This 177-nucleotide RNA was probed chemically with 2A3 and DMS. Conditions: 150 mM KOAc, 10 mM MgCl2 and 150 mM bicine (pH 8.5), 24 C. For DMS, 2,247 sequencing reads were counted. The 2A3 profile rests on 2,195 reads.
RNA sequence: GGGAACGACUCGAGUAGAGUCGAAAACUGGGAGCCAGCCCUGGGGAGGGACAGAGCCAGGGUCCCCUUCUGGACUGUGCAGGGCUAGGGCAGAGGGAAGGAGCGGGAGCCAGGGACGCACUGGCAGACCUAGUACCGGAUUCGUCCGGUACUAGGUAAAAGAAACAACAACAACAAC
Reactivity to 2A3 in 0.01 (KOAc 150mM, MgCl2 10mM, bicine 150mM(pH8.5), 24C), signal-to-noise 2, nucleotides 027 to 126: c010u010g000g010g060a040g000c000c000a000g010c000c010c010u020g030g000g030g040a070g020g010g070a010c020a020g100a040g080c000c010a020g030g000g000u060c040c030c000c000u020u070c020u020g070g020a060c030u080g050u170g060c010a000g000g000g000c040u080a100g060g000g000c030a040g060a100g120g010g030a150a230g050g030a150g050c200g020g000g000a010g000c020c000a000g010g060g030a080c020g030c060a050c060u010g020g020c000a040g020
Reactivity to DMS in 0.01 (KOAc 150mM, MgCl2 10mM, bicine 150mM(pH8.5), 24C), signal-to-noise 2, nucleotides 027 to 126: c040u000g000g010g010a280g010c050c020a070g030c020c000c000u000g010g010g020g010a060g020g000g020a030c020a030g000a180g000c020c040a020g010g000g000u000c070c100c220c030u000u010c010u000g020g000a070c040u010g000u010g010c020a070g000g010g010c020u000a070g020g030g000c030a100g000a100g000g000g000a100a140g000g010a110g000c130g010g020g000a110g010c030c010a010g000g000g020a080c140g010c110a030c010u000g000g020c000a120g000